The record gives the reactivity of an RNA of 177 nucleotides to DMS and 2A3. In probing experiments dimethyl sulfate is read out at A N1 and C N3, which are open when not base-paired. Values cover nucleotides 27 to 126. For DMS, 993 sequencing reads were counted. For DMS the reverse transcriptase was MarathonRT. The 2A3 profile rests on 794 reads. The data come from the RNA Mapping Database (RMDB), library RFMREP.
RNA sequence: GGGAACGACUCGAGUAGAGUCGAAAAUUUGGAUACCAGAGAGGUUAGGAGACAGCUUCUAAAGAUUUAUCUUGGCGAGGGGAAACCCAGGGUAGCUCCCAUCUGAGUACGUCGCAUCCUAACAUGCCCUUAAUAACCGGUUCGCCGGUUAUUAAGGAAAAGAAACAACAACAACAAC
Reactivity to DMS in 0.01 (KOAc 150mM, MgCl2 10mM, bicine 150mM(pH8.5), 24C), signal-to-noise 2, nucleotides 027 to 126: u000u000u010g010g050a110u000a080c010c020a120g010a100g000a090g010g010u000u000a020g010g000a140g010a100c100a170g000c050u000u010c080u000a040a040a090g000a060u010u010u000a020u010c030u010u000g000g000c000g010a110g010g000g000g000a120a130a110c110c000c030a030g010g000g000u000a020g000c060u030c040c000c040a050u000c070u000g030a060g010u000a060c100g000u000c070g010c100a120u000c010c010u000a010a040c110a110u000g000c200
Reactivity to 2A3 in 0.01 (KOAc 150mM, MgCl2 10mM, bicine 150mM(pH8.5), 24C), signal-to-noise 1, nucleotides 027 to 126: u060u020u130g100g010a010u020a020c050c030a000g060a000g000a030g140g000u040u050a010g010g000a010g030a080c090a130g100c000u080u050c050u140a080a170a000g010a000u110u160u180a120u050c010u010u100g050g000c040g000a080g000g050g040g010a040a040a060c020c000c040a010g090g000g020u030a030g020c010u060c000c000c010a020u010c050u070g060a040g030u030a080c070g020u030c030g020c030a030u080c010c010u020a020a000c000a020u050g020c000